[RMDB]
RNA sequence: GGGAACGACUCGAGUAGAGUCGAAAAGAUAUGGAUAGAUCGAAGGCGAUGUACUACCCACCUCGGAAACGAGAGGUACCUCGUGUUGACGAUCUAUCCUAAGUCAAAACCGGACUUCGGUCCGGAACGAGAUGAGAUUCUUCGGAAUCUCAUCUCGAAAAGAAACAACAACAACAAC
Reactivity to DMS in 0.01 (KOAc 150mM, MgCl2 10mM, bicine 150mM(pH8.5), 24C), signal-to-noise 1, nucleotides 027 to 126: g010a000u010a290u020g040g000a000u000a010g060a000u000c000g020a300a040g000g000c000g030a000u000g000u000a060c040u000a080c020c080c170a300c300c040u000c030g000g000a090a060a170c000g000a000g000a080g000g000u000a010c010c030u000c020g080u000g000u020u000g000a290c060g000a000u000c010u020a000u000c000c000u000a000a030g030u000c060a030a040a090a100c000c000g000g000a010c000u000u010c280g000g000u000c000c000g000g000a020a040
Reactivity to 2A3 in 0.01 (KOAc 150mM, MgCl2 10mM, bicine 150mM(pH8.5), 24C), signal-to-noise 1, nucleotides 027 to 126: g020a060u090a070u180g000g000a010u020a020g000a020u020c030g100a090a010g210g050c020g000a000u020g020u020a010c000u080a090c050c060c060a070c030c000u000c000g010g040a100a050a030c010g000a000g000a030g040g000u000a000c010c030u000c000g000u040g190u180u190g060a140c040g000a000u080c000u000a010u000c000c000u000a000a000g030u010c020a000a030a120a100c000c020g000g000a000c000u020u100c300g130g040u000c020c000g000g000a010a020